About this RNA
Structure probing data (DMS and 2A3) for a 177-nucleotide construct. For DMS the reverse transcriptase was MarathonRT. For 2A3 the reverse transcriptase was SuperScript II with manganese. In probing experiments dimethyl sulfate is read out at A N1 and C N3, which are open when not base-paired. It was measured as part of the RMDB libraries RFM100 and RFMREP. The RNA was probed in 150 mM KOAc, 10 mM MgCl2 and 150 mM bicine (pH 8.5) at 24 C.
[RMDB]
RNA sequence: GGGAACGACUCGAGUAGAGUCGAAAAACGCAUAUGACGUACGCGUCAUAUGCGAUGGAGUAGAGUGGGUGUGGCGGGGGGAGCAGGGCCCAGGGCAACCUCUCCCUCCGUGUGCCCAGAUCCUGAAGUAGAAAUUCGUAUUCGUACGAAUUUCUACAAAAGAAACAACAACAACAAC
Reactivity to DMS in 0.01 (KOAc 150mM, MgCl2 10mM, bicine 150mM(pH8.5), 24C), signal-to-noise 3, nucleotides 027 to 126: a090c000g000c000a000u000a000u000g010a010c010g020u030a130c210g030c000g030u010c000a000u000a000u000g000c000g010a010u030g010g030a130g000u020a070g000a100g000u000g010g000g010u020g030u010g000g040c040g010g000g000g000g010g000a010g000c140a010g010g000g000c040c010c140a070g000g020g020c030a060a080c010c000u000c000u000c000c000c000u000c000c000g000u000g010u000g000c000c000c000a020g010a050u000c030c010u010g000a160a130
Reactivity to 2A3 in 0.01 (KOAc 150mM, MgCl2 10mM, bicine 150mM(pH8.5), 24C), signal-to-noise 6, nucleotides 027 to 126: a000c010g010c000a000u000a000u010g010a000c010g020u050a020c210g030c020g120u000c000a000u010a010u010g010c000g010a010u010g030g020a070g050u230a090g040a060g160u060g010g030g000u050g010u110g240g010c010g010g010g000g000g020g010a010g000c070a010g010g010g010c010c060c050a100g070g140g010c050a100a120c020c000u000c000u010c000c000c000u000c000c000g000u010g020u020g000c000c010c010a000g000a010u020c000c000u050g030a130a030